[RMDB]
RNA sequence: GGGAACGACUCGAGUAGAGUCGAAAAGAUAUGGAUCCUUUAGGGAGACCUCGUAUCGGAAACGAUACACGCGAGGUCGAAGAACUAACUGGGAUCCUAAGUCAAAAGCCCAUGUUCGCAUGGGCAAGGUGUUCCGUAAGUUCGCUUACGGAACACCAAAAGAAACAACAACAACAAC
Reactivity to DMS in 0.01 (KOAc 150mM, MgCl2 10mM, bicine 150mM(pH8.5), 24C), signal-to-noise 1, nucleotides 027 to 126: g010a020u010a070u000g000g020a010u010c000c000u000u020u000a000g000g000g000a030g000a010c000c060u000c000g010u000a000u000c000g020g000a060a000a050c030g020a000u000a000c050a090c300g060c300g000a010g000g010u000c090g010a020a130g020a140a300c090u000a000a000c300u000g000g010g000a030u000c010c000u000a000a110g040u000c000a180a220a120a160g000c000c000c000a000u020g010u030u010c300g040c000a000u000g000g000g020c010a000a000